[RMDB]
RNA sequence: GGGAACGACUCGAGUAGAGUCGAAAACCCACGUGGUUCGCCACGUGGGAAAUAAAUUCAGCGGUAAUUCGAGGCCAAAUAUAACCGCUGAUGGCCUCGAAAAAAGUACACAGUUCGCUGUGUACAAUCGAGUAACUAUGUUCGCAUAGUUACUCGAAAAAGAAACAACAACAACAAC
Reactivity to 2A3 in 0.01 (KOAc 150mM, MgCl2 10mM, bicine 150mM(pH8.5), 24C), signal-to-noise 5, nucleotides 027 to 126: c010c010c000a000c000g000u010g000g050u040u050c180g030c060c000a000c000g000u000g000g000g020a030a040a010u150a010a060a040u160u100c020a010g010c020g050g040u100a070a120u060u030c010g000a000g000g000c010c010a010a050a000u210a010u050a240a300c010c010g000c000u010g030a000u000g000g000c000c000u000c000g000a020a000a000a000a000a010g000u000a000c000a000c000a000g030u060u090c160g020c120u000g000u000g000u010a000c010a000a070
Reactivity to DMS in 0.01 (KOAc 150mM, MgCl2 10mM, bicine 150mM(pH8.5), 24C), signal-to-noise 3, nucleotides 027 to 126: c000c000c000a020c000g060u010g010g010u000u010c200g020c000c000a000c000g010u020g000g000g000a010a020a030u010a060a070a100u000u030c030a020g010c020g010g010u000a060a090u000u000c020g000a020g020g000c000c010a010a040a050u000a070u000a070a160c030c020g000c010u000g010a060u000g010g000c010c000u000c010g010a000a030a040a050a050a090g030u000a010c000a020c000a010g020u000u010c240g010c000u010g010u000g000u000a000c010a060a070
Structure probing data (2A3 and DMS) for a 177-nucleotide construct. The RNA was probed in 150 mM KOAc, 10 mM MgCl2 and 150 mM bicine (pH 8.5) at 24 C. The data come from the RNA Mapping Database (RMDB), library M2PK50. The DMS profile rests on 4,688 reads.